The record gives the reactivity of an RNA of 177 nucleotides to DMS and 2A3.
[RMDB]
RNA sequence: GGGAACGACUCGAGUAGAGUCGAAAAGAACGAGGUCUGCCCUCUUCCUCAUAUAUCCUUACCACGGCAGACUUCGAAGGGCUUGAGAAUGAGGAAGAGGUGGUAAGGAUAUGUCUCAAGCCUUAGACUACACGUAUCUAUUCGUAGAUGCGUGUAGAAAAGAAACAACAACAACAAC
Reactivity to DMS in 0.01 (KOAc 150mM, MgCl2 10mM, bicine 150mM(pH8.5), 24C), signal-to-noise 9, nucleotides 027 to 126: g000a110a000c040g010a040g000g000u000c000u000g010c010c010c080u000c010u000u000c000c000u000c020a120u010a080u000a050u000c000c010u000u000a040c030c030a130c180g010g010c010a010g000a020c030u000u000c010g010a100a070g010g000g010c000u000u000g000a030g000a010a070u000g000a030g000g000a050a020g000a050g020g040u000g020g010u000a030a030g010g000a030u000a030u010g010u000c010u000c000a010a010g000c000c000u000u000a070g010a300
Reactivity to 2A3 in 0.01 (KOAc 150mM, MgCl2 10mM, bicine 150mM(pH8.5), 24C), signal-to-noise 8, nucleotides 027 to 126: g050a050a000c020g000a010g000g020u010c000u000g010c000c010c010u020c010u030u030c010c000u010c070a020u110a010u010a010u120c000c000u000u020a020c010c030a110c060g030g000c000a000g000a000c000u010u000c000g020a030a020g040g000g000c000u000u000g000a000g010a000a030u100g000a010g020g020a030a040g000a010g010g150u120g010g010u020a000a010g000g000a010u020a060u070g090u000c000u000c000a000a000g000c000c000u010u030a030g020a010

Notes:
The reactions ran in a buffer of 150 mM KOAc, 10 mM MgCl2 and 150 mM bicine (pH 8.5), at 24 C. For DMS, 46,955 sequencing reads were counted. It was measured as part of the RMDB library OK2TRN.